The record gives the reactivity of an RNA of 207 nucleotides to 2A3 and DMS. 2A3 adducts were read by reverse transcription with SuperScript II with manganese. For DMS the reverse transcriptase was MarathonRT. The data come from the RNA Mapping Database (RMDB), library OK3TST.
RNA sequence: GGGAACGACUCGAGUAGAGUCGAAAAUUACUACGUCAGGAAGAUGGUUGGGAGUCAGAGCCAAAACAGUCUCCAAGAGUGAGUGUGUGAGUAUCACUGUGUGUUUUGUAGAGGAAAAGGGAUUCUUAGGUUGGCAUCUCAAACCUUUUUUUGUCCCUGAGACAUACUAGUUCGCUAGUAUGUCUCAAAAAGAAACAACAACAACAAC
Reactivity to 2A3 in 0.01 (KOAc 150mM, MgCl2 10mM, bicine 150mM(pH8.5), 24C), signal-to-noise 2, nucleotides 027 to 156: u110u020a020c030u000a020c020g080u060c070a080g010g070a080a030g060a150u100g040g030u070u050g020g030g020a070g020u010c040a010g010a030g030c040c060a030a030a050a050c030a040g040u040c020u020c030c020a040a020g100a000g080u080g020a030g040u060g020u010g010u020g020a050g050u100a070u090c020a010c100u020g010u010g010u010g070u060u020u100u100g050u040a050g010a030g010g100a010a130a050a020g010g030g020a040u070u030c030u060u130a080g020g080u040u010g060g000c040a100u050c050u030c090a120a160a130c030c000u090u000u000u000u000u010u140g040u040c040c000c000
Reactivity to DMS in 0.01 (KOAc 150mM, MgCl2 10mM, bicine 150mM(pH8.5), 24C), signal-to-noise 3, nucleotides 027 to 156: u000u000a080c030u000a050c070g020u000c010a100g000g020a070a090g010a160u010g000g020u000u000g010g020g020a100g030u000c030a090g010a120g040c030c050a040a040a080a070c040a090g010u000c020u000c030c020a070a100g010a100g020u000g010a070g020u000g020u010g000u010g020a120g000u000a090u000c040a070c030u010g010u020g030u000g000u000u000u000u000g020u010a050g000a140g030g000a020a060a060a070g010g030g010a200u000u000c060u010u000a050g020g010u010u000g010g020c040a080u000c060u000c050a060a080a170c040c010u000u000u000u000u000u000u000g010u000c020c020c050